[RMDB]
RNA sequence: GGGAACGACUCGAGUAGAGUCGAAAAAGUAUACCUUUGGUUCUGAAAAGUCUUGCGCUCCUAUAGUCGUUCGGACCGCCUUCUAUGCUCGCGUCUUUCGAGGGGUACGUCGCCACUGGCCGCUGAAGGGACCACUUUAUUUCGAUAAAGUGGUCCCAAAAGAAACAACAACAACAAC
Reactivity to 2A3 in 0.01 (KOAc 150mM, MgCl2 10mM, bicine 150mM(pH8.5), 24C), signal-to-noise 2, nucleotides 027 to 126: a000g070u040a030u040a120c000c000u010u020u020g050g020u090u010c080u150g090a000a000a000a080g040u020c010u030u080g020c060g010c000u040c010c000u100a050u080a080g090u060c020g040u010u070c000g000g020a030c010c020g000c010c000u010u010c010u090a040u140g050c010u000c030g020c020g080u000c050u050u110u060c040g020a080g040g050g000g010u040a070c030g030u010c000g000c010c000a020c030u010g000g000c000c010g070c020u000g040a050a050
Reactivity to DMS in 0.01 (KOAc 150mM, MgCl2 10mM, bicine 150mM(pH8.5), 24C), signal-to-noise 1, nucleotides 027 to 126: a050g010u040a170u010a070c100c000u000u000u000g000g000u010u040c020u010g010a050a130a090a090g050u030c020u000u010g010c060g000c030u000c020c060u000a060u030a020g000u010c050g020u000u000c080g010g000a110c050c020g020c000c010u000u030c050u000a120u060g020c030u030c050g000c030g000u000c020u000u000u020c030g050a140g000g000g050g050u030a000c120g000u000c050g000c030c040a020c030u010g000g010c000c030g020c040u030g000a060a090